[RMDB]
Description:
The record gives the reactivity of an RNA of 207 nucleotides to 2A3. For 2A3 the reverse transcriptase was SuperScript II with manganese. Conditions: 150 mM KOAc, 10 mM MgCl2 and 150 mM bicine (pH 8.5), 24 C. The data come from the RNA Mapping Database (RMDB), library OK3TST. Values cover nucleotides 27 to 156.

RNA sequence: GGGAACGACUCGAGUAGAGUCGAAAAGUCAUGCCUUCGGGCAUGACAGGUACCGAGAGGUACCAAAUAGCGUACAGCAGACUCAGACUGUACGCUAAAAAAGUGUGUGUUCAAUAAGUGCCAAUUGAACACACACUAAAAUGGUGCAAGAGUGUGACCACCAUGAUCAUUUCGAUGAUCAUGGUGGAAAAGAAACAACAACAACAAC
Reactivity to 2A3 in 0.01 (KOAc 150mM, MgCl2 10mM, bicine 150mM(pH8.5), 24C), signal-to-noise 2, nucleotides 027 to 156: g000u000c000a000u010g010c000c000u060u070c220g090g000g040c000a000u010g000a000c010a020g000g000u000a000c010c010g040a040g000a010g070g000u000a000c000c000a080a000a000u080a000g000c000g000u000a000c000a020g000c020a000g090a100c050u060c140a020g030a240c000u000g000u000a010c000g000c000u010a040a020a020a000a020a000g000u000g000u000g000u000g000u000u000c010a000a000u070a190a110g060u080g250c030c040a030a000u000u000g000a000a000c010a000c000a000c000a000c000u000a000a000a000a020u090g060g020u070g010c030a090a040g010a020g050u060g010u020g090a030